RNA sequence: GGGAACGACUCGAGUAGAGUCGAAAAGAGAAAGACAAGUUUGAUGAGAAAGCUAAAUUGUGGGAGAAGAUUAAAAGACCCGGCAAUUUGUUUGACAAAGAACCAGCUCUAAGUGCAGAGAUUAGUUUUGAUAACAUUUUGACAAGAGUAGCUAGGCCUUAUGAUGGACAUUCGUGUCCAUCAUAAGAAAAGAAACAACAACAACAAC
Reactivity to DMS in 0.01 (KOAc 150mM, MgCl2 10mM, bicine 150mM(pH8.5), 24C), signal-to-noise 1, nucleotides 027 to 156: g030a110g000a100a030a070g020a090c060a080a100g020u000u000u000g020a100u000g000a170g000a110a120a060g000c030u000a040a090a090u000u000g010u000g010g020g010a070g000a150a190g000a190u000u000a040a120a140a180g010a190c010c050c020g020g000c030a070a110u000u000u040g000u010u010u000g040a230c200a130a040a160g000a040a020c050c000a050g000c040u020c000u000a040a110g020u010g060c100a120g010a070g000a080u010u000a060g020u000u000u000u000g000a040u000a070a080c010a070u000u000u000u000g000a100c070a030a070g000a080g020u000a120g020c060u000a070g040g020c120
Reactivity to 2A3 in 0.01 (KOAc 150mM, MgCl2 10mM, bicine 150mM(pH8.5), 24C), signal-to-noise 1, nucleotides 027 to 156: g050a000g000a030a050a000g040a010c030a020a070g000u040u070u090g100a080u070g010a020g090a060a050a000g000c040u060a010a050a050u080u020g000u050g010g010g040a060g030a110a040g040a110u170u100a130a220a100a010g050a050c040c070c000g060g000c030a010a000u000u000u050g040u100u110u150g010a020c030a010a060a010g030a030a030c010c020a050g040c020u000c010u060a030a130g040u060g100c070a000g020a000g000a030u060u090a040g040u080u060u020u080g040a030u050a110a000c020a020u050u060u050u130g030a010c040a060a010g010a030g070u040a000g000c010u010a010g000g040c000
Structure probing data (DMS and 2A3) for a 207-nucleotide construct.
It was measured as part of the RMDB library OK3TST.
The reactions ran in a buffer of 150 mM KOAc, 10 mM MgCl2 and 150 mM bicine (pH 8.5), at 24 C.
For 2A3, 1,048 sequencing reads were counted.